[RMDB]
RNA sequence: GGGAACGACUCGAGUAGAGUCGAAAAAGCACUGGUACGAUACGUCGUACCAGUGCAGUCGUUGAGAUGGAACGCAAUUAAAUACAUGUGUGACGUGUAUUUGCGAACGACGUAAUUAUUUUUCAAAAUCACGCUAUCGUGUUCGCACGAUAGCGAAGUGUUCAGUCAGGUUCGCCUGACUGAACACAAAAGAAACAACAACAACAAC
Reactivity to 2A3 in 0.01 (KOAc 150mM, MgCl2 10mM, bicine 150mM(pH8.5), 24C), signal-to-noise 2, nucleotides 027 to 156: a030g000c010a010c000u000g000g000u000a010c000g000a000u030a000c140g120u020c000g000u000a040c000c000a000g000u000g000c000a000g000u010c000g040u010u130g070a140g020a110u250g050g160a110a060c060g030c010a000a040u160u070a180a080a000u000a000c000a000u040g130u020g130u140g200a050c020g010u000g000u020a000u020u010u030g020c060g020a040a000c030g010a000c020g030u040a060a070u080u180a060u050u030u020u060u010c070a050a130a010a020u300c100a010c080g000c010u000a000u000c020g010u020g020u120u120c010g150c180a000c000g000a000u000a000g000c010g000a040a000